[RMDB]
RNA sequence: GGGAACGACUCGAGUAGAGUCGAAAAUUAAAGCACGCGAAGCACGCGAAGCACAUGAAGCACAUGAAGCACAACAAGCAGUACAAGCACGGCAAGCAGUAGAAGCAGUACAAGCAGCCGAAAAAAAGUAGAUCAGUAGAUUCGUCUACUGAUCUACAAAAGAAACAACAACAACAAC
Reactivity to DMS in 0.01 (KOAc 150mM, MgCl2 10mM, bicine 150mM(pH8.5), 24C), signal-to-noise 4, nucleotides 027 to 126: u000u030a070a060a100g020c030a100c080g000c030g000a030a130g020c060a090c070g050c070g010a070a100g020c030a060c090a070u000g000a060a070g000c050a040c080a050u010g000a060a110g000c020a020c100a040a030c070a050a060g010c030a040g020u000a030c060a050a070g000c050a080c110g020g000c040a040a080g010c030a060g010u000a030g000a090a110g020c060a030g000u000a050c050a030a110g020c070a050g020c020c020g020a010a010a060a020a060a060a090
Reactivity to 2A3 in 0.01 (KOAc 150mM, MgCl2 10mM, bicine 150mM(pH8.5), 24C), signal-to-noise 2, nucleotides 027 to 126: u070u020a100a010a020g040c030a000c040g050c030g050a090a040g020c050a010c040g040c030g040a050a000g020c020a010c010a090u060g040a090a010g020c030a010c010a110u070g050a090a000g020c030a010c010a110a020c010a030a060g000c010a010g040u070a030c010a110a000g040c010a030c060g030g010c030a010a020g010c000a000g020u060a020g010a060a010g050c060a010g040u040a020c030a050a070g000c000a010g020c000c000g100a080a020a010a000a000a010a020

Description:
This 177-nucleotide RNA was probed chemically with DMS and 2A3. Conditions: 150 mM KOAc, 10 mM MgCl2 and 150 mM bicine (pH 8.5), 24 C. For DMS, 2,663 sequencing reads were counted.